[RMDB]
This 177-nucleotide RNA was probed chemically with 2A3 and DMS. High 2A3 reactivity points to a flexible backbone, as in loops and unpaired stretches. For DMS the reverse transcriptase was MarathonRT. 2A3 adducts were read by reverse transcription with SuperScript II with manganese. For DMS, 3,709 sequencing reads were counted. The reactions ran in a buffer of 150 mM KOAc, 10 mM MgCl2 and 150 mM bicine (pH 8.5), at 24 C. Reactivities are given for positions 27 through 126.
RNA sequence: GGGAACGACUCGAGUAGAGUCGAAAAGAUAUGGAGAUCCCUACCAGCAACAGCGUACUGGGUCGGAAACGACCUGUACGACAUGCUGAUGGGAUCUCCUAAGUCAAAACCAGUGUUCGCACUGGAAGUACAUGUUCAUCUUCGGAUGAACAUGUACAAAAGAAACAACAACAACAAC
Reactivity to 2A3 in 0.01 (KOAc 150mM, MgCl2 10mM, bicine 150mM(pH8.5), 24C), signal-to-noise 4, nucleotides 027 to 126: g000a010u040a040u110g000g000a000g010a010u030c000c010c020u040a150c130c010a000g000c020a030a230c040a230g090c000g010u020a010c120u300g000g050g010u000c000g010g020a060a050a030c010g000a010c010c000u010g010u000a010c000g070a030c000a070u230g000c000u010g000a020u020g000g000g000a000u000c000u010c000c000u000a000a010g000u000c000a000a000a080a170c010c000a000g010u000g030u070u150c300g090c120a000c010u010g000g040a020a010
Reactivity to DMS in 0.01 (KOAc 150mM, MgCl2 10mM, bicine 150mM(pH8.5), 24C), signal-to-noise 4, nucleotides 027 to 126: g010a040u010a300u010g000g010a020g000a010u000c000c000c000u000a150c160c000a010g000c020a040a130c300a220g000c020g030u000a010c000u000g050g010g010u000c000g000g000a050a080a270c000g010a030c000c000u000g010u000a010c000g000a050c070a250u000g020c010u000g010a140u010g000g010g020a010u010c010u000c000c000u010a010a100g010u000c000a090a110a180a200c000c000a010g010u010g010u010u020c230g000c020a040c000u000g020g030a050a110